This 177-nucleotide RNA was probed chemically with 2A3 and DMS.
Conditions: 150 mM KOAc, 10 mM MgCl2 and 150 mM bicine (pH 8.5), 24 C.
Values cover nucleotides 27 to 126.
The 2A3 profile rests on 9,006 reads.
High 2A3 reactivity points to a flexible backbone, as in loops and unpaired stretches.
[RMDB]
RNA sequence: GGGAACGACUCGAGUAGAGUCGAAAAGUUCGGCGAGGUUCCGGCUGCCUGGCGGCGAACGAAUUCGUGUCGCAAAUCUAAAAGACAUGGGUUAACGUAUGGUCAAGUUUAAGCGCACCACGAAGGAUCAAGGGAUCGGGUUCGCUCGGUCCCUUGAAAAAGAAACAACAACAACAAC
Reactivity to 2A3 in 0.01 (KOAc 150mM, MgCl2 10mM, bicine 150mM(pH8.5), 24C), signal-to-noise 3, nucleotides 027 to 126: g010u020u030c020g020g000c000g040a030g010g030u010u040c010c000g020g010c020u020g000c000c000u000g020g000c010g040g000c010g000a060a010c000g010a000a010u020u000c000g000u000g000u000c000g010c020a000a040a030u060c020u120a070a020a000a020g010a010c010a000u010g020g000g000u020u050a060a000c010g050u050a040u070g050g010u020c010a000a020g000u010u010u070a030a000g010c000g000c020a010c010c000a030c020g040a040a030g050g020a050
Reactivity to DMS in 0.01 (KOAc 150mM, MgCl2 10mM, bicine 150mM(pH8.5), 24C), signal-to-noise 9, nucleotides 027 to 126: g020u010u010c020g010g010c040g010a080g010g000u010u010c030c040g000g000c020u000g000c020c010u010g000g000c060g010g000c020g000a060a040c050g010a080a070u010u010c010g020u010g010u000c000g010c140a070a090a070u040c150u030a070a090a110a100g000a020c020a020u000g000g000g010u020u010a060a070c070g010u010a050u010g000g010u010c040a060a080g000u010u010u020a070a090g000c050g010c090a040c040c020a050c060g010a070a070g010g000a160